Source information: Structure probing data (DMS) for a 177-nucleotide construct. Conditions: 150 mM KOAc, 10 mM MgCl2 and 150 mM bicine (pH 8.5), 24 C. For DMS the reverse transcriptase was MarathonRT. The DMS profile rests on 1,111 reads.
RNA sequence: GGGAACGACUCGAGUAGAGUCGAAAAGUGCGGAGUGAAAUUCAUAGGGGCCACGCCAAUUUGGCGAAACGCCCCGGUACUCCGCGUAGUCGCGACGUAAACGUUCUGUGUUGGCGUUCAGGCCUCAAAUGCUCGCACGGUUCGCCGUGCGAGCAUUAAAAGAAACAACAACAACAAC
Reactivity to DMS in 0.01 (KOAc 150mM, MgCl2 10mM, bicine 150mM(pH8.5), 24C), signal-to-noise 1, nucleotides 027 to 126: g000u000g000c000g000g000a000g000u000g000a000a000a130u040u000c200a070u060a260g000g000g030g020c000c260a280c000g000c000c000a080a240u000u030u080g000g000c000g000a040a040a190c300g000c000c000c000c000g000g040u010a040c000u010c000c000g000c000g020u000a030g000u000c110g000c000g000a000c040g010u060a150a010a160c040g000u040u000c020u000g040u000g000u000u000g050g000c120g060u000u000c100a180g000g000c070c040u030c110a120